An RNA of 177 nucleotides, treated with DMS and 2A3 and read out base by base. It was measured as part of the RMDB library OK1LIB. DMS adducts were read by reverse transcription with MarathonRT. The reactions ran in a buffer of 150 mM KOAc, 10 mM MgCl2 and 150 mM bicine (pH 8.5), at 24 C.
[RMDB]
RNA sequence: GGGAACGACUCGAGUAGAGUCGAAAAGAGGUGGUAAUCUGAUAGGAGGCUGAGAAGUCUUAAGGUAAUUUAUCGUCUAAUUGCAUCAGGUUUAAGUACCUAUCAGAUCUUAGACUUGAUGAAGAUAGUAACUCGUAGUAUUCGUACUAUGAGUUACAAAAGAAACAACAACAACAAC
Reactivity to DMS in 0.01 (KOAc 150mM, MgCl2 10mM, bicine 150mM(pH8.5), 24C), signal-to-noise 9, nucleotides 027 to 126: g000a070g010g010u010g000g000u010a050a060u010c010u000g010a020u010a040g010g000a040g000g010c010u010g000a180g010a150a030g020u000c020u010u030a090a110g020g020u020a050a080u030u020u020a040u010c050g000u010c070u000a070a100u030u040g010c010a010u000c010a010g000g000u000u000u000a010a010g010u020a080c030c010u010a050u010c070a040g000a050u010c010u000u000a010g010a000c010u000u010g010a020u000g000a090a080g000a080u030a110
Reactivity to 2A3 in 0.01 (KOAc 150mM, MgCl2 10mM, bicine 150mM(pH8.5), 24C), signal-to-noise 9, nucleotides 027 to 126: g070a010g000g050u110g020g050u070a050a040u020c010u010g010a010u020a030g040g030a010g010g010c010u020g020a020g030a130a010g040u010c000u080u100a090a050g090g030u060a100a120u080u100u120a100u090c050g080u010c110u130a110a160u190u220g030c010a010u000c000a000g010g000u000u000u010a010a010g010u030a040c010c000u020a030u030c010a010g010a020u020c000u000u000a000g000a000c000u010u000g000a000u010g010a030a030g050a080u170a040